[RMDB]
RNA sequence: GGGAACGACUCGAGUAGAGUCGAAAAUACGGCCGUGAAGAUCUCGGCACAAGCUACAGCACGGGCAUAGCGCAAACUACAUCGUGCCCGAGCGGCUAUGAUAAAUUAACAACAGGGUGCUAUAAAUCAUGUCCUAGCGGCUAUGUGCGCGAUGCUGGAACGUUCAGUUCUUCGGAACUGAACGUUCAAAAGAAACAACAACAACAAC
Reactivity to 2A3 in 0.01 (KOAc 150mM, MgCl2 10mM, bicine 150mM(pH8.5), 24C), signal-to-noise 1, nucleotides 027 to 156: u210a010c060g030g000c030c000g050u030g060a030a020g030a180u180c060u070c130g000g040c060a030c040a000a020g060c000u100a060c030a060g000c000a010c050g000g000g040c000a010u020a010g020c080g020c020a060a070a000c010u180a060c050a150u080c010g030u070g020c000c000c000g010a000g000c040g060g010c010u020a020u060g030a000u050a030a120a010u160u150a050a060c060a030a010c020a100g140g030g000u010g000c040u060a010u050a250a200a010u110c020a020u130g000u000c000c000u030a010g010c030g000g010c000u000a080u080g050u040g000c030g000c000g050a050u000g030c050u180g030
This 207-nucleotide RNA was probed chemically with 2A3.
For 2A3 the reverse transcriptase was SuperScript II with manganese.
Values are in units of 0.01, from 0 to 300, in steps of 10.
For 2A3, 531 sequencing reads were counted.